Source information: Chemical mapping of a 177-nucleotide RNA with DMS. Reactivities are given for positions 27 through 126. For DMS, 1,061 sequencing reads were counted. In probing experiments dimethyl sulfate is read out at A N1 and C N3, which are open when not base-paired. The RNA was probed in 150 mM KOAc, 10 mM MgCl2 and 150 mM bicine (pH 8.5) at 24 C.
RNA sequence: GGGAACGACUCGAGUAGAGUCGAAAACUUUUUUGAGAUGACACACUCCAGGCGUGAAAGACCGCUGAUAAAAGUGUCCGCACCCCCUAACGGGUUACAAGUAGGGGAGGGCGAAAGUGGGUACAAGUUGUCGAGAAUUGUUCGCAAUUCUCGACAAAAAAGAAACAACAACAACAAC
Reactivity to DMS in 0.01 (KOAc 150mM, MgCl2 10mM, bicine 150mM(pH8.5), 24C), signal-to-noise 1, nucleotides 027 to 126: c040u000u030u000u040u010u020g000a100g000a000u030g030a000c020a000c030a030c110u030c000c300a190g000g010c030g000u000g010a170a290a070g000a020c280c020g000c000u030g010a150u010a000a020a300a120g070u000g000u000c020c020g000c030a000c120c000c000c000c000u000a030a090c010g020g000g050u040u090a070c200a030a030g050u000a020g000g010g000g000a050g000g000g000c120g010a060a060a000g000u070g000g020g000u020a070c160a150a040g020